The record gives the reactivity of an RNA of 207 nucleotides to 2A3. The data come from the RNA Mapping Database (RMDB), library OK3TST. Values cover nucleotides 27 to 156. The reactions ran in a buffer of 150 mM KOAc, 10 mM MgCl2 and 150 mM bicine (pH 8.5), at 24 C.
[RMDB]
RNA sequence: GGGAACGACUCGAGUAGAGUCGAAAAGUAAGGUACCACAACGUACGGUCUGAUACGUCAUACCCCGAAGCCGCGCACGCCAAGCAGGUGAAUUGUGGUUGUGACGUCACAAGCAGGGCGAGGGAAGUAUCAUGACGACUCGUCGAGACCCGAAGCCGAAGGUUGUCCAUUUCGAUGGACAACCUUCAAAAGAAACAACAACAACAAC
Reactivity to 2A3 in 0.01 (KOAc 150mM, MgCl2 10mM, bicine 150mM(pH8.5), 24C), signal-to-noise 1, nucleotides 027 to 156: g080u040a100a000g130g000u000a000c010c040a060c050a150a080c040g040u060a000c020g030g270u010c000u000g000a030u030a030c000g000u050c030a010u080a190c000c000c000c030g150a130a220g100c000c000g110c000g010c050a010c140g180c040c000a110a000g000c060a150g010g090u180g060a180a200u100u180g000u040g060g000u140u290g000u000g050a050c050g000u000c000a000c000a060a010g010c000a000g000g000g020c040g000a010g000g140g000a100a100g000u000a000u050c010a050u130g000a000c040g000a000c000u000c000g000u000c000g000a040g080a170c000c200c110g000a030a000g000c130c140